[RMDB]
RNA sequence: GGGAACGACUCGAGUAGAGUCGAAAAUCAAGAAUCUUACGCAAAACAUAGAAGAGUUUCUAGCCAUUGGUGGUUUGUUGCCAUGGCAAUGAUCUAGAAAACUUAGUUGUCCUUGAUGUAUUUGCAUUCAAUGAGAACAAAUUCAGCAGCUGAGUGAGUGAUUAUGCUCAUUCGUGAGCAUAAUCACAAAAGAAACAACAACAACAAC
Reactivity to 2A3 in 0.01 (KOAc 150mM, MgCl2 10mM, bicine 150mM(pH8.5), 24C), signal-to-noise 3, nucleotides 027 to 156: u100c040a040a050g090a040a040u040c030u130u120a070c090g020c090a030a050a100a050c030a100u110a040g100a100a020g030a060g010u040u040u040c010u020a010g020c000c010a020u080u110g000g000u000g020g050u040u070u110g100u070u130g010c000c000a010u000g050g000c000a030a010u050g010a010u020c040u050a020g030a020a120a000a020c000u040u020a020g010u000u020g050u070c050c050u040u160g040a050u040g030u030a110u070u050u090g070c080a040u070u110c030a080a160u250g050a080g010a150a030c020a030a030a030u080u080c010a000g000c000a010g020c000u040g000a010g020u030g030a010
Reactivity to DMS in 0.01 (KOAc 150mM, MgCl2 10mM, bicine 150mM(pH8.5), 24C), signal-to-noise 1, nucleotides 027 to 156: u000c040a120a140g010a080a070u000c000u000u000a070c110g090c030a040a050a090a300c060a110u000a120g010a030a100g000a140g010u000u020u000c020u000a100g000c020c000a040u010u000g010g010u020g020g000u000u000u020g000u010u000g020c060c000a040u010g020g000c020a020a050u010g000a060u020c000u000a050g010a050a020a040a060c040u000u010a100g020u010u000g010u020c030c070u010u020g010a050u010g010u000a120u000u000u000g040c030a060u000u000c070a080a080u000g030a140g020a030a090c030a020a070a080u000u010c050a000g000c000a020g000c000u000g010a060g000u000g000a210